Description
An RNA of 207 nucleotides, treated with 2A3 and DMS and read out base by base. High 2A3 reactivity points to a flexible backbone, as in loops and unpaired stretches. DMS adducts were read by reverse transcription with MarathonRT. The RNA was probed in 150 mM KOAc, 10 mM MgCl2 and 150 mM bicine (pH 8.5) at 24 C.

RNA sequence: GGGAACGACUCGAGUAGAGUCGAAAACGGCAAAAAAGCAAACUUGACCACCAAGGAAAAAAGAGAUCUUAUCCAAGGAUGCAAAAGAUAAUCUCACUUUUGACACCCACUGAUCUCGAACUUAAAGAAAACCGAGACUACUUCGGUAGUCUCGGAACUAAGAAACAGGGUUCGCCCUGUUUCUUAGAAAAGAAACAACAACAACAAC
Reactivity to 2A3 in 0.01 (KOAc 150mM, MgCl2 10mM, bicine 150mM(pH8.5), 24C), signal-to-noise 3, nucleotides 027 to 156: c020g030g010c050a000a020a030a040a020a100g090c080a120a090a070c050u060u050g040a100c010c020a040c020c020a040a040g040g020a100a060a050a040a120a000g020a010g000a000u020c020u090u090a060u130c100c070a070a050g010g010a060u050g000c000a000a010a010a000g020a050u110a180a210u180c090u040c090a060c010u030u000u000u020g090a090c000a010c000c020c000a020c080u030g000a000u010c000u000c000g010a030a030c020u090u130a080a030a090g050a050a100a040a010c000c000g000a000g000a000c000u000a000c000u030u060c150g030g010u000a000g000u000c010u000c000g000g000a000a000
Reactivity to DMS in 0.01 (KOAc 150mM, MgCl2 10mM, bicine 150mM(pH8.5), 24C), signal-to-noise 2, nucleotides 027 to 156: c060g030g040c070a010a040a020a110a040a070g010c020a100a080a120c070u000u000g000a280c020c030a050c130c020a100a160g000g050a030a120a080a080a090a150g000a030g040a030u000c040u040u000a080u010c150c160a060a120g020g000a040u000g010c000a010a000a040a030g010a070u000a070a120u000c170u020c040a210c040u000u020u010u000g000a150c000a040c000c030c000a190c210u000g000a040u000c000u000c010g000a130a050c080u010u000a080a110a210g000a040a030a080a170c000c000g010a000g000a000c000u000a000c020u000u020c300g030g020u020a010g010u000c000u000c000g000g000a010a030
The data come from the RNA Mapping Database (RMDB), library M2RFPK.